[RMDB]
RNA sequence: GGGAACGACUCGAGUAGAGUCGAAAAGAUUAGUCUGUCCAUUUUUAUUCAUCAGUUUAUACUUUAUUUGUCAUUUUCCUAUGGCAAAAAGGUCCUUUAUUAUUACCUGUAACCGACUAAUCCUUCCAUCCAACUGCCACUUCGGUGGCAGUUGGAUAAAAGAAACAACAACAACAAC
Reactivity to 2A3 in 0.01 (KOAc 150mM, MgCl2 10mM, bicine 150mM(pH8.5), 24C), signal-to-noise 2, nucleotides 027 to 126: g000a010u030u010a000g000u000c030u020g010u000c070c030a010u160u060u060u030u260a290u170u040c070a070u010c030a000g060u000u120u150a080u020a000c010u020u070u230a300u020u050u000g000u000c000a030u000u030u120u250c060c100u080a000u000g000g010c000a010a010a010a010a000g000g060u080c030c050u160u120u090a080u100u080a070u220u100a080c050c010u080g000u020a000a000c050c040g030a000c000u000a000a000u010c000c000u000u070c000c000